[RMDB]
RNA sequence: GGGAACGACUCGAGUAGAGUCGAAAAUGAAGAGUUCGGUAUAGAAUUUGAUGACUCUGAGGAUAUUGAUACGAUAGGUGGAUGGUUACAAUCUCGUAAUACCAAUUUACAAAAAGAUGAUUACGUGGAGACCAUCAGUAUUCGUACUGAUGGUCUCAAAAGAAACAACAACAACAAC
Reactivity to DMS in 0.01 (KOAc 150mM, MgCl2 10mM, bicine 150mM(pH8.5), 24C), signal-to-noise 4, nucleotides 027 to 126: u030g000a110a050g000a040g020u000u010c010g010g000u020a120u080a130g000a060a100u030u010u010g020a110u030g030a060c030u000c020u000g000a150g040g000a060u030a070u000u020g000a070u010a060c080g010a070u020a060g020g020u000g020g010a080u010g000g000u000u000a080c130a070a070u050c020u000c050g020u010a020a040u000a120c150c030a060a160u000u040u020a080c290a040a040a050a060a070g000a100u000g000a060u000u000a010c050g010u010g000
Reactivity to 2A3 in 0.01 (KOAc 150mM, MgCl2 10mM, bicine 150mM(pH8.5), 24C), signal-to-noise 2, nucleotides 027 to 126: u150g070a090a050g000a000g050u170u060c070g000g100u200a040u100a160g240a140a020u050u100u150g150a170u160g030a030c020u030c040u050g010a020g000g060a030u050a000u100u140g060a020u040a120c050g000a010u030a080g000g120u070g090g070a140u040g010g000u130u000a020c010a020a100u020c000u000c020g000u070a010a000u030a110c050c040a040a020u010u140u130a070c080a040a200a000a000a000g040a070u190g000a010u030u030a070c070g000u140g120